[RMDB]
The data come from the RNA Mapping Database (RMDB), library OK2TRN. The record gives the reactivity of an RNA of 177 nucleotides to 2A3 and DMS. The DMS profile rests on 1,597 reads. DMS adducts were read by reverse transcription with MarathonRT. 2A3 adducts were read by reverse transcription with SuperScript II with manganese. The RNA was probed in 150 mM KOAc, 10 mM MgCl2 and 150 mM bicine (pH 8.5) at 24 C. Reactivities are rounded to 0.1 and cut off at 0 and 3.

RNA sequence: GGGAACGACUCGAGUAGAGUCGAAAAAGCCUUCAGUUACCCAUUAUCAGGCCUUGGCUCAAGUGGAAGUGCCUAUUGCUAUCGGGCGCUAUGACACUUCGCGCUUUAGUUUAAUGGAGUUAAAACCUGCAGUCAUGUAAUUCGUUACAUGACUGCAAAAAGAAACAACAACAACAAC
Reactivity to 2A3 in 0.01 (KOAc 150mM, MgCl2 10mM, bicine 150mM(pH8.5), 24C), signal-to-noise 1, nucleotides 027 to 126: a000g090c020c000u100u140c070a040g020u080u070a090c020c020c000a030u140u030a070u140c060a020g150g000c050c000u110u110g020g000c000u090c030a020a000g020u030g020g010a060a020g030u030g000c030c010u080a110u090u150g020c050u100a110u300c080g140g040g000c080g020c000u030a030u120g020a000c000a010c000u020u040c110g100c030g000c060u080u050u070a000g000u020u020u020a120a060u140g050g000a110g020u090u100a040a180a010a010c000c080
Reactivity to DMS in 0.01 (KOAc 150mM, MgCl2 10mM, bicine 150mM(pH8.5), 24C), signal-to-noise 2, nucleotides 027 to 126: a090g000c030c020u000u000c180a130g010u000u000a120c040c000c020a080u000u000a070u010c150a120g000g040c070c070u000u000g030g000c020u010c050a070a010g020u000g000g000a040a030g000u000g000c000c000u010a150u010u040g010c100u010a150u000c210g020g040g010c060g030c040u010a020u000g020a090c010a040c030u000u010c040g000c090g010c030u000u000u000a030g010u000u000u000a040a060u000g020g000a150g010u000u010a040a060a090a130c160c040